[RMDB]
RNA sequence: GGGAACGACUCGAGUAGAGUCGAAAAUCAAGGUCUUGCUUUCCGAUUUGAGAAUGAUCCAUGCUUGCAUGUGUAGGUUUUUUUGUUCCUCAGAUCUACAAGAUCUCGGACCAGGCUUCAUUCCCCUAUCGCACGAUGUGUUCGCACAUCGUGCGAUAAAAGAAACAACAACAACAAC
Reactivity to 2A3 in 0.01 (KOAc 150mM, MgCl2 10mM, bicine 150mM(pH8.5), 24C), signal-to-noise 3, nucleotides 027 to 126: u040c000a020a070g000g020u020c000u000u060g070c040u150u150u000c080c030g050a080u010u040u080g140a100g070a080a100u140g020a010u030c060c010a020u030g000c010u060u120g020c020a040u050g080u030g020u180a060g090g080u030u000u010u000u010u080u160g040u030u020c000c000u010c010a000g010a040u000c010u010a060c010a000a060g020a060u010c010u000c020g000g010a010c000c000a010g010g030c000u000u010c050a020u040u020c030c000c010c000u030
Background: Chemical mapping of a 177-nucleotide RNA with 2A3. The data come from the RNA Mapping Database (RMDB), libraries RFM100 and RFMREP. Values are in units of 0.01, from 0 to 300, in steps of 10.